Chemical mapping of a 177-nucleotide RNA with 2A3.
Source: RMDB library OK1LIB, as collected in RNAgym.
For 2A3, 540 sequencing reads were counted.

RNA sequence: GGGAACGACUCGAGUAGAGUCGAAAACUUUGACUGCUUCGAUAUAUAAAUCAGCAUCAUCAUUUACCAAGUCAUCAUCAAAAUUACCAUAUGUUAAAUGACUCACUAGAUUUAAGUCGAAUAGUAGUACAGGCUCGUUUUUCGAAACGAGCCUGUAAAAAGAAACAACAACAACAAC
Reactivity to 2A3 in 0.01 (KOAc 150mM, MgCl2 10mM, bicine 150mM(pH8.5), 24C), signal-to-noise 1, nucleotides 027 to 126: c030u110u010u120g050a000c010u000g000c000u010u000c010g000a000u030a000u000a010u000a290a010a010u020c020a020g010c000a050u090c030a000u000c000a000u050u020u030a030c030c010a000a000g020u020c000a120u030c050a040u010c010a080a140a100a040u060u130a040c000c030a130u180a000u220g000u020u010a020a040a000u000g000a000c020u000c080a080c100u050a050g000a040u000u010u000a010a010g000u000c010g040a010a000u060a080g040u010a000g000